[RMDB]
RNA sequence: GGGAACGACUCGAGUAGAGUCGAAAAGCUAAUGAUGUCGAAGUCCAAUCAUCUGGCAUGAUUAAGCCAAAUGCUCUUCUUUGUGCUACUUGCCCCUUUGCUAAGGGUGAUAGCUGUUCUUCUAAUUGCAACGCCAAGUUCGCUUGGCGUAAAAGAAACAACAACAACAAC
Reactivity to DMS in 0.01 (KOAc 150mM, MgCl2 10mM, bicine 150mM(pH8.5), 24C), signal-to-noise 7, nucleotides 027 to 129: g000c040u030a020a010u040g040a050u010g000u030c010g030a070a050g030u000c110c120a080a090u050c030a070u020c070u030g000g000c000a000u000g000a070u060u040a030a060g030c000c050a070a110a060u050g020c060u010c050u000u000c030u010u010u030g030u000g000c040u000a070c160u000u000g000c040c020c020c020u010u030u030g040c030u000a130a120g020g010g080u020g050a000u000a050g000c040u040g020u040u010c060u000u000c090u050a070a100u080u050g020c080a050
Reactivity to 2A3 in 0.01 (KOAc 150mM, MgCl2 10mM, bicine 150mM(pH8.5), 24C), signal-to-noise 9, nucleotides 027 to 129: g030c030u030a040a020u080g150a020u030g020u050c030g080a050a030g060u040c090c070a050a100u140c030a060u020c060u080g020g000c010a020u040g030a070u210u060a130a020g010c010c010a040a050a070u120g010c030u010c000u100u030c010u040u080u170g100u110g020c010u010a040c100u010u020g010c000c000c010c000u010u030u070g010c020u030a020a020g010g010g000u020g010a020u020a010g010c060u050g060u050u000c000u060u020c010u070a170a170u200u140g010c030a020
Notes
An RNA of 170 nucleotides, treated with DMS and 2A3 and read out base by base. Values cover nucleotides 27 to 129.